[RMDB]
An RNA of 177 nucleotides, treated with 2A3 and DMS and read out base by base.
For DMS the reverse transcriptase was MarathonRT.
The RNA was probed in 150 mM KOAc, 10 mM MgCl2 and 150 mM bicine (pH 8.5) at 24 C.
For 2A3, 3,459 sequencing reads were counted.
The data come from the RNA Mapping Database (RMDB), library OK1LIB.
RNA sequence: GGGAACGACUCGAGUAGAGUCGAAAAGAAAGAAGAAAAACCGUGUGAACUAUGAUGGCAUUACAAAACUCGACGAAAAGAAACACUUGAUACUACCGAAAGCAAGAGCUGCUGCAUACGGAAGAAACGCUACUAUAUCCUUCGGGAUAUAGUAGCGAAAAGAAACAACAACAACAAC
Reactivity to 2A3 in 0.01 (KOAc 150mM, MgCl2 10mM, bicine 150mM(pH8.5), 24C), signal-to-noise 4, nucleotides 027 to 126: g070a010a060a000g130a030a050g060a010a050a010a000a000c010c020g000u000g030u030g080a050a040c030u040a120u140g030a080u080g080g000c040a050u060u140a120c050a010a060a040a060c040u040c060g060a050c050g080a080a010a060a060g090a000a030a000c060a010c030u040u070g040a030u090a150c060u020a050c020c050g070a130a040a020g020c020a030a000g040a050g070c030u030g010c000u010g000c000a030u040a050c030g010g030a050a010g020a010a060a000
Reactivity to DMS in 0.01 (KOAc 150mM, MgCl2 10mM, bicine 150mM(pH8.5), 24C), signal-to-noise 3, nucleotides 027 to 126: g010a080a070a090g000a150a060g000a110a030a040a110a050c100c020g030u000g000u000g040a070a070c100u030a090u000g020a060u010g070g010c050a030u000u000a070c130a040a070a060a010c090u010c030g000a030c060g010a060a040a020a080g000a050a080a060c090a100c090u020u050g010a060u010a040c080u000a060c030c020g050a080a010a150g000c120a050a020g000a040g020c030u000g000c040u000g000c020a040u020a030c070g000g020a050a040g040a060a110a130